Chemical mapping of a 177-nucleotide RNA with DMS and 2A3. The 2A3 profile rests on 3,231 reads. High 2A3 reactivity points to a flexible backbone, as in loops and unpaired stretches.

RNA sequence: GGGAACGACUCGAGUAGAGUCGAAAAGCGGGGUAUUACCAUUAAGAGCCAAGCCGUCGCCAUGCAGUACACCGCCAAAGAUGGCAACACCUACACCCUCAACCUUGUCGACACCCCCGGUCAUGUCUAACAUUUCUUACUUCGGUAAGAAAUGUUAAAAAGAAACAACAACAACAAC
Reactivity to DMS in 0.01 (KOAc 150mM, MgCl2 10mM, bicine 150mM(pH8.5), 24C), signal-to-noise 7, nucleotides 027 to 126: g010c050g010g010g000g010u000a060u010u010a100c060c060a100u010u010a080a100g010a120g010c030c030a070a120g000c050c030g000u010c060g020c020c050a050u000g010c060a070g010u010a060c090a070c060c040g010c050c060a060a060a100g000a090u000g010g000c050a060a060c060a080c060c020u010a070c100a090c040c020c020u000c050a080a070c070c050u000u000g010u000c040g010a090c110a140c040c010c010c010c020g000g000u010c090a050u010g000u000c100
Reactivity to 2A3 in 0.01 (KOAc 150mM, MgCl2 10mM, bicine 150mM(pH8.5), 24C), signal-to-noise 3, nucleotides 027 to 126: g010c020g000g000g000g000u070a070u140u140a080c030c040a030u110u160a120a030g030a000g110c020c010a070a000g030c000c030g050u020c010g000c010c030a070u090g000c000a000g010u020a020c020a030c060c000g040c020c020a070a080a020g090a050u110g020g000c020a000a020c010a030c010c000u070a030c030a060c030c000c000u030c020a060a070c010c000u050u060g060u100c010g000a020c000a080c050c000c000c010c000g020g020u070c020a020u090g060u070c050